Notes:
Structure probing data (DMS and 2A3) for a 177-nucleotide construct.
[RMDB]
RNA sequence: GGGAACGACUCGAGUAGAGUCGAAAACAAGAUCGAUGUGGACCAGUACAAUGAGGACAACUUCCGGGAGGAUGAUGGGGUGGAGAGCGCGGCAGCCGGUCCGGAUGAGAGCGAGAUUACGACGCUGAUCCGGAUCGACUUUCGAGUCGAUCCGGAUAAAAGAAACAACAACAACAAC
Reactivity to DMS in 0.01 (KOAc 150mM, MgCl2 10mM, bicine 150mM(pH8.5), 24C), signal-to-noise 1, nucleotides 027 to 126: c180a050a250g000a070u000c030g030a060u000g000u000g000g000a110c060c040a010g000u020a110c020a070a110u000g000a070g000g000a030c060a080a090c070u000u000c020c100g000g000g000a060g070g010a140u000g030a100u000g000g060g000g020u020g000g020a050g000a100g000c110g050c040g000g030c120a000g020c000c060g000g000u020c020c030g030g010a060u000g000a090g040a030g020c060g000a130g000a230u000u000a120c110g000a010c030g030c010u000g000
Reactivity to 2A3 in 0.01 (KOAc 150mM, MgCl2 10mM, bicine 150mM(pH8.5), 24C), signal-to-noise 2, nucleotides 027 to 126: c080a150a040g000a010u050c030g010a040u090g070u070g100g070a020c060c030a000g010u150a000c050a110a120u080g010a070g040g030a000c000a120a090c030u140u000c020c030g100g040g060a110g060g000a040u140g070a090u090g180g000g000g020u060g000g080a120g000a000g040c040g010c030g030g000c020a000g000c020c040g010g000u040c040c000g010g000a020u000g020a030g040a000g040c000g000a000g000a100u120u110a000c030g000a010c010g110c070u080g030

Reactivities are given for positions 27 through 126. Conditions: 150 mM KOAc, 10 mM MgCl2 and 150 mM bicine (pH 8.5), 24 C.